About this RNA:
An RNA of 177 nucleotides, treated with DMS and 2A3 and read out base by base. Conditions: 150 mM KOAc, 10 mM MgCl2 and 150 mM bicine (pH 8.5), 24 C. 2A3 adducts were read by reverse transcription with SuperScript II with manganese. Source: RMDB library TTRDEL, as collected in RNAgym. For DMS, 12,177 sequencing reads were counted.

[RMDB]
RNA sequence: GGGAACGACUCGAGUAGAGUCGAAAAGAUAUGGAGGAAGCUUUUGACGAGACAGUAUCGGAAACGAUACUACGUCUCGAUAAGCUUCUCCUAAGUCAAAAGACAUACCCCUUCGGGGGUAUGUCAACCAUAUAGACAGGUUCGCCUGUCUAUAUGGAAAAGAAACAACAACAACAAC
Reactivity to DMS in 0.01 (KOAc 150mM, MgCl2 10mM, bicine 150mM(pH8.5), 24C), signal-to-noise 7, nucleotides 027 to 126: g010a030u000a300u000g000g010a020g010g010a010a020g010c000u000u000u010u010g020a190c100g010a010g010a010c000a030g010u000a000u000c010g000g000a110a080a170c000g010a010u000a000c000u010a060c260g010u000c000u000c010g000a050u000a010a010g000c010u000u000c000u000c000c000u000a030a160g000u000c030a080a080a130a100g010a020c000a010u000a000c000c000c000c000u000u010c210g020g010g010g000g010u000a000u000g000u000c000a020a080
Reactivity to 2A3 in 0.01 (KOAc 150mM, MgCl2 10mM, bicine 150mM(pH8.5), 24C), signal-to-noise 7, nucleotides 027 to 126: g020a010u070a050u160g020g050a060g110g250a070a020g000c020u090u110u180u250g300a220c070g000a000g000a000c010a010g010u000a000u010c000g020g020a060a060a030c010g000a000u010a010c010u020a050c080g000u000c000u000c000g000a000u000a000a000g000c000u000u000c000u000c000c000u020a110a020g050u010c020a040a020a100a130g000a000c000a000u000a000c000c020c000c010u020u120c240g160g000g000g000g000u000a000u000g000u000c000a000a000